[RMDB]
This 177-nucleotide RNA was probed chemically with DMS and 2A3. The 2A3 profile rests on 4,089 reads. Reactivities are rounded to 0.1 and cut off at 0 and 3.
RNA sequence: GGGAACGACUCGAGUAGAGUCGAAAAGAAAGAAAGAAAAGACACUGAGUGAGAAUCAAACCAAUCGUAGUGUCGGUAAAGCGUAAUUUAAACUUUGCCAAUUCUCACAGCGAGAAAGACUCGCAAACCGUGAUGAUACUUUCGAGUAUCAUCACGGAAAAGAAACAACAACAACAAC
Reactivity to DMS in 0.01 (KOAc 150mM, MgCl2 10mM, bicine 150mM(pH8.5), 24C), signal-to-noise 2, nucleotides 027 to 126: g010a110a100a170g000a210a050a150g020a070a070a200a080g020a010c000a000c000u000g050a200g000u000g020a000g000a000a010u000c020a070a040a080c020c040a060a100u090c140g030u000a040g010u000g020u000c020g010g020u000a020a000a000g020c070g010u010a040a110u010u070u050a020a170a120c040u000u020u000g000c050c000a020a010u000u000c040u010c030a010c020a230g010c020g000a000g000a020a070a050g000a190c010u000c000g000c010a110a040a100
Reactivity to 2A3 in 0.01 (KOAc 150mM, MgCl2 10mM, bicine 150mM(pH8.5), 24C), signal-to-noise 4, nucleotides 027 to 126: g120a030a060a020g180a020a080a010g080a010a070a020a030g020a000c020a000c040u070g030a060g090u040g000a020g010a020a030u060c050a070a050a080c010c030a020a040u100c020g020u060a030g000u010g000u000c000g000g000u010a000a000a000g020c090g050u110a080a260u040u110u240a080a100a050c000u020u010u010g000c010c000a010a050u000u000c020u000c000a000c000a010g010c000g010a010g050a040a060a000g070a040c000u000c000g000c000a000a030a010